RNA sequence: GGGAACGACUCGAGUAGAGUCGAAAAGGCGAAUAUAGCGCAAUAAAAGGAUACCAUAAGCUACGAAGCCGAGUUAGAAACGAAGGCACUCGAAUGGUAGUGCUCGCAAAGCUGCGACGAAGAGCCAAAUUUAAAUGUUAUUCGUAACAUUUAAAUUAAAAGAAACAACAACAACAAC
Reactivity to DMS in 0.01 (KOAc 150mM, MgCl2 10mM, bicine 150mM(pH8.5), 24C), signal-to-noise 9, nucleotides 027 to 126: g000g010c010g010a130a140u030a140u020a030g020c020g010c130a090a070u030a060a080a110a110g000g010a140u020a040c040c040a030u010a090a110g000c050u010a060c080g000a120a050g000c000c000g000a170g000u000u010a060g000a080a080a050c030g000a120a080g010g000c020a030c050u000c030g010a100a050u020g000g010u010a010g010u010g010c040u000c040g010c110a050a070a090g010c070u010g000c020g000a070c110g000a070a090g000a140g010c020c060a050
Reactivity to 2A3 in 0.01 (KOAc 150mM, MgCl2 10mM, bicine 150mM(pH8.5), 24C), signal-to-noise 7, nucleotides 027 to 126: g040g000c020g070a140a010u220a020u070a140g050c010g000c030a030a040u120a140a130a020a030g140g010a030u070a090c010c000a030u040a080a070g030c050u050a030c050g050a060a000g000c000c010g000a010g000u030u040a060g060a060a090a010c050g060a130a020g040g000c010a040c050u040c020g100a120a090u060g040g020u030a010g020u010g050c020u020c020g020c020a030a100a040g030c080u050g010c010g010a020c010g010a020a030g020a000g030c000c000a000